[RMDB]
An RNA of 207 nucleotides, treated with DMS and 2A3 and read out base by base. DMS adducts were read by reverse transcription with MarathonRT. It was measured as part of the RMDB library RNAMAK. The 2A3 profile rests on 2,552 reads. DMS (dimethyl sulfate) methylates the pairing face of unpaired adenines and cytosines.
RNA sequence: GGGAACGACUCGAGUAGAGUCGAAAACCAUGAGCUUCGGCUCAUGGAAAAAGCGUACUACAUAUGGGCUGCUAAGACAGACGCUACCCACCUCCCAAAUAGGAGAGGCGUUCGAGCAGCCGUAUGUAUCGCAAAAAGCCGUUGUUCGCAACGGCAACUUAAGUGUCACGUUCGCGUGACACUUAAGAAAAGAAACAACAACAACAAC
Reactivity to DMS in 0.01 (KOAc 150mM, MgCl2 10mM, bicine 150mM(pH8.5), 24C), signal-to-noise 1, nucleotides 027 to 156: c000c000a030u000g040a060g040c000u000u000c300g050g000c000u000c000a030u030g000g000a000a020a060a140a140g000c030g000u000a130c030u010a030c000a000u000a070u010g060g030g020c010u000g050c000u000a210a120g030a170c300a080g000a030c020g030c020u020a000c030c000c040a300c060c000u010c000c020c010a040a100a170u000a070g000g000a060g070a190g000g020c010g010u020u000c050g000a010g070c040a060g000c000c000g010u000a010u000g010u000a010u000c000g000c020a030a050a110a130a080g010c000c000g100u010u000g020u000u000c180g040c020a030a030c020g010g030c060a000a000
Reactivity to 2A3 in 0.01 (KOAc 150mM, MgCl2 10mM, bicine 150mM(pH8.5), 24C), signal-to-noise 3, nucleotides 027 to 156: c020c000a000u000g000a010g000c090u110u150c300g100g000c000u020c000a000u000g000g150a000a030a060a050a030g040c030g020u090a110c060u010a000c060a040u070a000u120g300g060g030c000u000g010c010u050a180a070g100a130c080a040g020a010c010g000c000u070a100c070c060c040a060c010c000u020c030c000c030a220a300a090u300a110g000g000a020g000a010g030g000c010g020u050u090c070g020a020g000c000a000g000c000c030g000u000a000u000g000u000a020u300c040g000c030a110a010a000a010a000g000c000c010g030u000u000g020u030u120c250g000c150a000a010c000g000g010c010a010a000